[RMDB]
RNA sequence: GGGAACGACUCGAGUAGAGUCGAAAAGAUCAUUGAAGGCCAUCCGCUCCCGGGGCAGGUGGGAGACGAGCAGCUGGAGCGAGUGUUCGCGCACCUGCGGAGAGGGCUACCAGUUCCGCGUCGUGCGUACGAGACGCAAUUUCGAUUGCGUCUCGUAAAAAGAAACAACAACAACAAC
Reactivity to 2A3 in 0.01 (KOAc 150mM, MgCl2 10mM, bicine 150mM(pH8.5), 24C), signal-to-noise 1, nucleotides 027 to 126: g020a010u130c050a030u080u220g100a120a020g040g010c010c000a020u020c000c020g020c020u020c030c000c000g030g010g040g000c070a030g070g020u000g030g060g010a050g040a070c030g010a010g010c030a040g010c040u070g030g000a040g010c020g040a070g030u100g040u040u100c010g000c000g000c020a040c000c020u030g000c000g000g000a030g010a030g030g060g030c030u100a130c010c020a010g050u080u070c010c010g020c020g050u070c020g000u030g000c010g000
Reactivity to DMS in 0.01 (KOAc 150mM, MgCl2 10mM, bicine 150mM(pH8.5), 24C), signal-to-noise 3, nucleotides 027 to 126: g020a110u010c080a100u010u010g000a080a120g000g000c030c030a080u010c050c000g020c060u000c000c020c030g010g000g000g040c070a040g020g000u000g010g010g010a100g020a100c060g020a090g020c090a100g000c030u000g010g000a090g000c080g000a080g000u010g010u000u000c030g000c010g010c030a040c040c090u010g010c030g000g000a010g000a140g010g000g010c140u020a100c030c010a110g030u000u000c030c020g010c040g010u010c150g000u000g010c020g030